[RMDB]
RNA sequence: GGGAACGACUCGAGUAGAGUCGAAAAUGUCUCAACCUAUGUGAUAAUCUUACAAGCCACUAAAUUUACUUUGUGGAACUACUUGUUUGAGACUAUUCCCACACAGUUGUUCCCACUCUUAUUUGUGCUUGCUUACAAGCUUCGGCUUGUAAGCAAGAAAAGAAACAACAACAACAAC
Reactivity to 2A3 in 0.01 (KOAc 150mM, MgCl2 10mM, bicine 150mM(pH8.5), 24C), signal-to-noise 1, nucleotides 027 to 126: u040g000u020c000u000c010a000a020c000c040u120a160u220g040u040g000a160u040a230a070u080c000u030u010a020c080a000a000g010c030c000a020c080u220a060a030a100u240u210u170a120c050u000u020u040g010u000g020g040a060a030c040u040a010c010u080u030g040u100u010u000g000a000g000a000c000u020a020u000u000c000c000c000a040c030a000c000a020g010u020u020g000u020u000c020c040c010a030c040u110c020u100u140a150u120u130u110g110u050g070

Structure probing data (2A3) for a 177-nucleotide construct. Values cover nucleotides 27 to 126. The RNA was probed in 150 mM KOAc, 10 mM MgCl2 and 150 mM bicine (pH 8.5) at 24 C.